[RMDB]
RNA sequence: GGGAACGACUCGAGUAGAGUCGAAAAGGCUCGAUCUUCAGCACCGGCGUGCUGCCGUCCAAGGGGCUGCAGCUCGAAUACGGCGUUCUCGAGUCCGACACCGUGGACGUGGACGAGCAGGAGAACGCCAACGUCGGACGUUCGCGUCCGACGUUGGAAAAGAAACAACAACAACAAC
Reactivity to 2A3 in 0.01 (KOAc 150mM, MgCl2 10mM, bicine 150mM(pH8.5), 24C), signal-to-noise 2, nucleotides 027 to 126: g020g000c020u020c010g090a220u050c070u170u050c070a000g020c050a020c010c030g110g000c030g000u000g010c000u000g000c000c020g000u010c040c040a300a280g110g040g040g000c020u030g010c010a010g000c000u040c010g060a050a090u220a110c030g030g000c020g010u080u020c020u000c000g010a010g020u000c010c020g020a020c030a060c080c010g070u180g070g020a050c040g040u050g000g040a030c000g000a050g000c030a050g060g090a070g000a060a020c060g020
Reactivity to DMS in 0.01 (KOAc 150mM, MgCl2 10mM, bicine 150mM(pH8.5), 24C), signal-to-noise 3, nucleotides 027 to 126: g010g010c020u010c030g000a100u000c070u000u000c120a050g010c040a100c040c010g010g020c070g020u000g000c010u000g000c030c080g010u010c020c020a150a170g030g040g010g000c010u000g000c040a030g000c020u010c020g000a120a090u010a130c130g000g000c020g020u010u000c010u000c000g000a200g020u000c010c010g000a230c030a060c040c030g000u010g020g010a100c140g010u030g000g000a140c030g010a050g010c000a070g000g010a070g000a040a060c060g020